[RMDB]
RNA sequence: GGGAACGACUCGAGUAGAGUCGAAAAUGACGUUAAACUGCUGACUCAUACAUACUGACACCGGUUGCUCAACAGGCUGUGUGGGACAAUAGAAUAACAAGGCUGUCAAUUUGAGCUUGACGGCUGCUGCCGUAGUGAAAUUCGUUUCACUACGGCAAAAAGAAACAACAACAACAAC
Reactivity to 2A3 in 0.01 (KOAc 150mM, MgCl2 10mM, bicine 150mM(pH8.5), 24C), signal-to-noise 6, nucleotides 027 to 126: u130g060a030c100g000u020u020a050a060a030c000u030g020c020u020g030a050c010u010c010a000u030a060c010a020u110a050c030u110g070a030c020a050c070c040g100g020u090u110g030c020u030c050a040a090c000a040g050g000c020u020g020u000g000u010g030g000g020a000c010a000a050u040a030g050a030a040u050a050a020c040a060a050g040g000c000u000g000u000c000a010a020u050u040u200g080a060g050c030u000u000g000a000c000g000g000c000u020g000c010
Reactivity to DMS in 0.01 (KOAc 150mM, MgCl2 10mM, bicine 150mM(pH8.5), 24C), signal-to-noise 7, nucleotides 027 to 126: u020g000a130c120g000u010u000a020a060a270c030u000g000c070u010g000a100c010u000c020a030u010a040c040a060u010a050c070u010g000a130c150a090c100c040g000g010u020u010g010c050u010c030a040a090c090a060g000g000c070u000g010u010g040u010g000g000g000a060c060a030a040u000a030g010a040a150u010a030a050c060a110a110g000g010c000u000g000u000c010a010a010u010u020u020g020a110g020c300u000u000g000a010c010g010g010c000u000g010c140